[RMDB]
RNA sequence: GGGAACGACUCGAGUAGAGUCGAAAAGCAGUGUGAUAGUACCACCGGUCAAGUGCGGCGAUUGACCGCGCGGAGUGCUAUUGCACCCAUGGCGGAUGCAGUGGUGUUUUCGCCCGAUGGUACUAAAUGUGUAACUGUCUUUCGAGACAGUUACACAAAAAGAAACAACAACAACAAC
Reactivity to 2A3 in 0.01 (KOAc 150mM, MgCl2 10mM, bicine 150mM(pH8.5), 24C), signal-to-noise 2, nucleotides 027 to 126: g090c090a070g050u030g030u060g240a130u050a040g000u000a010c010c030a010c010c000g000g040u130c070a110a150g040u040g110c000g000g020c040g140a110u050u300g110a220c000c000g020c000g000c000g020g020a030g000u030g000c000u010a000u000u010g000c010a000c000c000c020a170u240g290g000c160g020g000a040u030g020c010a000g000u030g010g000u030g070u070u170u010u060c010g000c000c000c000g020a010u050g020g010u000a000c000u030a000a070a050
Reactivity to DMS in 0.01 (KOAc 150mM, MgCl2 10mM, bicine 150mM(pH8.5), 24C), signal-to-noise 3, nucleotides 027 to 126: g010c100a080g020u010g020u010g010a220u000a020g010u000a020c010c000a020c000c000g020g010u000c140a080a100g010u020g010c010g020g010c050g010a190u000u010g010a100c000c000g050c040g010c000g010g000a030g000u000g010c010u000a020u000u000g010c010a010c000c010c000a160u010g010g000c200g010g000a040u000g000c000a000g000u000g010g010u000g020u000u000u010u010c040g010c090c000c030g020a020u000g010g000u010a030c010u000a020a070a100